This 177-nucleotide RNA was probed chemically with 2A3 and DMS. It was measured as part of the RMDB library TTRDEL. Reactivities are given for positions 27 through 126. The DMS profile rests on 9,120 reads. 2A3 adducts were read by reverse transcription with SuperScript II with manganese.
[RMDB]
RNA sequence: GGGAACGACUCGAGUAGAGUCGAAAAGAUAUGGACGCAGCUUUUGACGCUCUGACAGUCGGAAACGACUGGAGGAGCGAUAAGCUGGUCCUAAGUCAAAACUGAGUGCCGUUCGCGGCACUCAGAAGUAUAAAUACUAGUUCGCUAGUAUUUAUACAAAAGAAACAACAACAACAAC
Reactivity to 2A3 in 0.01 (KOAc 150mM, MgCl2 10mM, bicine 150mM(pH8.5), 24C), signal-to-noise 4, nucleotides 027 to 126: g020a020u080a040u160g010g000a040c080g030c300a010g000c010u050u070u110u230g200a130c040g000c000u000c000u000g010a020c000a010g000u000c000g010g010a070a080a050c010g010a010c000u010g010g000a010g000g010a000g040c000g000a000u000a000a000g000c000u000g000g000u000c000c010u010a100a030g040u020c040a010a000a130a200c000u010g000a000g010u010g010c020c010g030u080u100c300g010c030g140g000c010a000c000u000c000a000g000a010a000
Reactivity to DMS in 0.01 (KOAc 150mM, MgCl2 10mM, bicine 150mM(pH8.5), 24C), signal-to-noise 6, nucleotides 027 to 126: g000a050u000a300u010g000g010a010c000g010c010a010g010c000u000u000u010u010g020a190c080g000c000u000c000u000g010a300c010a010g000u000c010g000g000a090a080a190c000g000a000c000u000g000g000a300g000g000a000g020c000g010a010u000a010a020g030c000u000g000g010u000c000c000u000a020a080g010u000c040a080a060a130a140c010u000g000a010g030u000g000c000c000g020u000u010c210g010c000g000g000c000a000c000u000c000a010g000a020a080